Background: The record gives the reactivity of an RNA of 177 nucleotides to 2A3 and DMS. Source: RMDB library OK2TST, as collected in RNAgym. For DMS, 17,850 sequencing reads were counted. High 2A3 reactivity points to a flexible backbone, as in loops and unpaired stretches. Reactivities are rounded to 0.1 and cut off at 0 and 3. 2A3 adducts were read by reverse transcription with SuperScript II with manganese. The RNA was probed in 150 mM KOAc, 10 mM MgCl2 and 150 mM bicine (pH 8.5) at 24 C.
RNA sequence: GGGAACGACUCGAGUAGAGUCGAAAAAAACCAACGUGCCUGAGUUGAUGAUCAUGCCCUUCACCGAGUCGCUGGCCUUCGGGGCCACCCGGAAUCCGUGGUGCCUCAAUCGAACCCCUGGCGGCAGAUACACAUAAGUUUUCGAACUUAUGUGUAUAAAAGAAACAACAACAACAAC
Reactivity to 2A3 in 0.01 (KOAc 150mM, MgCl2 10mM, bicine 150mM(pH8.5), 24C), signal-to-noise 5, nucleotides 027 to 126: a000a000a000c030c000a020a030c040g040u050g030c010c020u060g020a060g040u070u040g080a100u070g010a030u060c030a050u120g040c000c000c000u030u030c030a050c060c020g020a020g040u040c020g010c040u020g030g020c000c010u050u060c070g050g000g020g040c040c010a000c000c010c000g030g060a140a090u050c030c010g060u090g020g020u000g010c010c000u040c030a040a090u100c020g040a060a080c000c000c010c020u010g040g000c000g000g000c010a020g010
Reactivity to DMS in 0.01 (KOAc 150mM, MgCl2 10mM, bicine 150mM(pH8.5), 24C), signal-to-noise 9, nucleotides 027 to 126: a050a060a070c030c010a080a090c130g010u000g000c030c020u000g010a130g010u000u000g010a060u000g000a080u000c080a080u010g010c030c020c020u000u000c060a100c060c020g010a080g010u010c040g010c050u000g010g010c040c040u000u000c110g020g010g000g010c140c040a040c010c000c020g010g000a160a100u010c040c020g010u010g020g010u000g010c060c010u000c040a070a060u010c090g010a070a140c040c030c030c040u000g000g010c030g010g010c060a070g010